[RMDB]
RNA sequence: GGGAACGACUCGAGUAGAGUCGAAAAGAAGCAGUCCUUAUUGUGUGUGAUGUUUAGUCAUCGCACUGUACCUACGGGCUGCCAACGUAGGUCCAAUGUGCCGAGAGGCACUAGAAGUACGGCUUAUUAUGAGGCAUCGCCGUACCAAUGAUGCUGAGGCUAUAGUGGUAUUCGUACCACUAUAGCCAAAAGAAACAACAACAACAAC
Reactivity to 2A3 in 0.01 (KOAc 150mM, MgCl2 10mM, bicine 150mM(pH8.5), 24C), signal-to-noise 3, nucleotides 027 to 156: g140a060a010g010c010a020g010u040c010c030u150u100a180u190u180g040u030g000u000g010u010g040a030u010g040u040u150u190a300g140u210c000a000u000c000g010c000a000c030u030g020u040a060c000c000u020a030c030g010g000g000c020u050g050c050c030a030a010c040g060u030a030g040g020u030c020c010a100a120u080g000u000g030c000c000g100a120g000a070g000g000c010a010c020u010a010g020a050a000g040u030a000c020g000g000c040u090u040a050u150u090a120u300g050a040g050g090c020a020u050c020g020c010c000g000u010a020c000c000a080a080u180g010a020u060g000c020u000g000a030
Reactivity to DMS in 0.01 (KOAc 150mM, MgCl2 10mM, bicine 150mM(pH8.5), 24C), signal-to-noise 2, nucleotides 027 to 156: g040a140a080g010c020a040g020u010c010c010u000u000a100u000u010g020u000g060u000g000u000g020a080u000g020u000u000u020a180g010u000c000a030u000c000g020c000a030c040u020g000u000a080c040c060u000a060c090g000g010g050c060u010g030c060c050a040a100c000g020u000a050g010g020u010c040c020a090a170u010g030u000g010c000c040g010a230g040a300g020g000c000a020c000u000a050g000a160a070g020u000a030c040g030g010c000u010u010a140u010u000a210u000g030a120g040g010c090a110u000c090g030c010c010g030u000a010c000c040a030a130u000g030a070u010g020c000u010g010a300

Chemical mapping of a 207-nucleotide RNA with 2A3 and DMS. Reactivities are rounded to 0.1 and cut off at 0 and 3. Reactivities are given for positions 27 through 156. For 2A3, 1,630 sequencing reads were counted. For DMS the reverse transcriptase was MarathonRT. For 2A3 the reverse transcriptase was SuperScript II with manganese.